[RMDB]
Annotation
The record gives the reactivity of an RNA of 177 nucleotides to DMS and 2A3. The RNA was probed in 150 mM KOAc, 10 mM MgCl2 and 150 mM bicine (pH 8.5) at 24 C. Reactivities are rounded to 0.1 and cut off at 0 and 3. It was measured as part of the RMDB library RFMREP.
RNA sequence: GGGAACGACUCGAGUAGAGUCGAAAAGAUGGUGUUACACUGUUGGAAGAGCAAACGCUGACCUUCUUGAGGUCUGGCUUCAAGCACUGUUUUGGUGUUGUGGCUGAUACUCUUGGGCAGUGUUUUGACAGAAUGUAAAGUUCGCUUUACAUUCUGUAAAAGAAACAACAACAACAAC
Reactivity to DMS in 0.01 (KOAc 150mM, MgCl2 10mM, bicine 150mM(pH8.5), 24C), signal-to-noise 8, nucleotides 027 to 126: g010a080u010g010g010u000g010u000u010a090c060a050c030u000g010u000u000g010g010a060a070g000a070g010c100a050a030a040c050g010c070u000g000a080c000c010u000u010c180u000u000g000a020g000g000u000c020u010g020g010c000u000u000c030a070a040g010c000a010c000u000g010u000u010u010u010g010g020u000g000u000u000g010u000g000g010c010u000g000a070u000a070c010u000c010u000u000g000g000g000c010a020g010u000g000u000u000u000u000g010
Reactivity to 2A3 in 0.01 (KOAc 150mM, MgCl2 10mM, bicine 150mM(pH8.5), 24C), signal-to-noise 9, nucleotides 027 to 126: g080a060u150g010g070u070g020u120u090a040c040a010c040u020g030u040u030g080g120a090a040g010a030g070c050a030a010a000c010g000c020u040g130a300c010c000u150u190c040u080u130g040a010g000g010u010c030u040g030g000c000u030u030c030a080a020g060c000a000c000u040g200u300u220u200u300g000g000u010g000u010u020g010u010g010g000c010u010g000a010u080a260c010u010c010u020u020g080g000g000c000a000g000u010g010u010u020u000u020g030